[RMDB]
An RNA of 177 nucleotides, treated with DMS and 2A3 and read out base by base.
2A3 adducts were read by reverse transcription with SuperScript II with manganese.
The RNA was probed in 150 mM KOAc, 10 mM MgCl2 and 150 mM bicine (pH 8.5) at 24 C.
RNA sequence: GGGAACGACUCGAGUAGAGUCGAAAAUAGUACUCUGGUCAAUGCGGAUUGCCUGUGGCGGUGUUGGCUGGACGACCGAGUGUCGGCGGAUACCUCCGGGCAGCUUGUCUGCUUGCAUGCUCCCAUGCUACUUGUGUAAGUUCGCUUACACAAGUAGAAAAGAAACAACAACAACAAC
Reactivity to DMS in 0.01 (KOAc 150mM, MgCl2 10mM, bicine 150mM(pH8.5), 24C), signal-to-noise 5, nucleotides 027 to 126: u000a080g010u000a060c130u000c050u010g010g000u000c040a050a060u000g020c020g010g000a070u000u000g020c020c010u000g000u010g030g010c120g020g020u010g020u000u000g010g020c010u010g010g010a080c040g000a110c110c120g000a150g010u010g010u010c000g010g010c020g010g000a040u000a030c030c010u000c020c030g000g000g010c010a030g010c150u000u010g010u000c020u010g000c010u000u000g010c080a090u000g000c090u000c010c010c010a150u010g010
Reactivity to 2A3 in 0.01 (KOAc 150mM, MgCl2 10mM, bicine 150mM(pH8.5), 24C), signal-to-noise 6, nucleotides 027 to 126: u090a010g060u060a050c050u010c080u160g110g030u120c020a030a050u150g030c020g020g050a090u130u100g020c000c000u140g080u240g080g000c090g000g020u010g010u030u030g130g000c040u060g110g020a030c020g020a040c010c130g090a120g040u200g020u040c010g020g000c010g020g000a010u030a040c000c000u020c020c000g000g000g020c010a000g010c030u070u150g020u030c010u010g020c000u000u040g020c010a020u080g010c010u010c000c000c010a010u050g020